This 177-nucleotide RNA was probed chemically with DMS and 2A3.
[RMDB]
RNA sequence: GGGAACGACUCGAGUAGAGUCGAAAAUGCCAUUUUAGUUUUUGACGGAGAUUCGAAUGAACUUAAGUUUAUGAUGAAGGUAUGGCUGUUGAGAUUAUUUGGUCGGGAUUGUAGUUUGAAGAUGUGCGUAUAGUAGACACUUCGGUGUCUACUAUACAAAAGAAACAACAACAACAAC
Reactivity to DMS in 0.01 (KOAc 150mM, MgCl2 10mM, bicine 150mM(pH8.5), 24C), signal-to-noise 4, nucleotides 027 to 126: u010g010c030c020a100u000u010u020u010a070g010u000u000u000u000u000g030a100c030g020g010a140g000a130u000u000c020g010a150a060u000g000a040a050c040u010u010a080a120g010u010u000u000a030u010g010a150u000g020a060a080g000g000u010a060u000g000g010c020u000g000u000u000g010a060g010a050u000u010a040u000u000u010g010g020u000c060g000g000g010a100u000u000g010u010a060g010u000u000u010g010a050a100g000a070u010g010u010g010c270
Reactivity to 2A3 in 0.01 (KOAc 150mM, MgCl2 10mM, bicine 150mM(pH8.5), 24C), signal-to-noise 1, nucleotides 027 to 126: u080g050c000c010a090u090u090u010u200a050g020u040u010u050u070u110g050a010c020g000g100a080g000a130u030u070c020g060a050a100u080g000a050a000c000u050u130a190a050g030u040u030u060a050u060g070a040u060g030a000a000g070g010u070a020u080g050g000c050u020g000u010u090g000a030g000a060u040u020a040u080u130u040g050g000u040c060g040g060g000a020u000u100g050u000a030g020u000u010u110g060a100a010g080a010u130g000u040g160c020

For DMS, 5,173 sequencing reads were counted. DMS adducts were read by reverse transcription with MarathonRT. The reactions ran in a buffer of 150 mM KOAc, 10 mM MgCl2 and 150 mM bicine (pH 8.5), at 24 C.